The record gives the reactivity of an RNA of 177 nucleotides to 2A3 and DMS. Conditions: 150 mM KOAc, 10 mM MgCl2 and 150 mM bicine (pH 8.5), 24 C.
RNA sequence: GGGAACGACUCGAGUAGAGUCGAAAAGAAAGAAAGAAAGAUGUAUUUUGAGUCCGUAAUUGAAUCAAAAGUGAAUCAAAACGUGAACAUCAAAACUACAUUUUGUAUGCUUGUGGAUAAGUUCAAACAAAAAAGGGCUAUUCGUAGCCCUUUUUUGAAAAGAAACAACAACAACAAC
Reactivity to 2A3 in 0.01 (KOAc 150mM, MgCl2 10mM, bicine 150mM(pH8.5), 24C), signal-to-noise 2, nucleotides 027 to 126: g040a030a070a010g100a030a030a010g140a040a200a000g010a000u000g000u000a020u000u060u000u000g000a030g020u020c000c000g000u010a010a200u050u080g040a000a040u020c010a030a040a090a130g300u120g040a000a040u000c000a000a000a010a000c000g080u130g100a090a030c020a090u000c000a000a000a000a040c100u060a000c000a000u020u040u070u040g000u010a050u070g020c100u030u000g000u050g140g130a040u030a190a000g010u040u060c010a010a060a060
Reactivity to DMS in 0.01 (KOAc 150mM, MgCl2 10mM, bicine 150mM(pH8.5), 24C), signal-to-noise 4, nucleotides 027 to 126: g030a130a050a050g000a100a100a140g000a130a080a020g000a000u000g000u010a010u000u000u010u010g000a010g000u000c010c000g000u000a080a080u010u000g000a020a070u010c030a040a170a170a210g030u030g010a020a050u010c000a000a020a160a030c010g020u040g000a050a040c040a080u010c000a000a010a000a020c260u010a000c010a010u000u000u000u000g000u010a090u020g000c100u000u000g010u000g020g000a130u040a060a070g000u010u000c030a020a060a190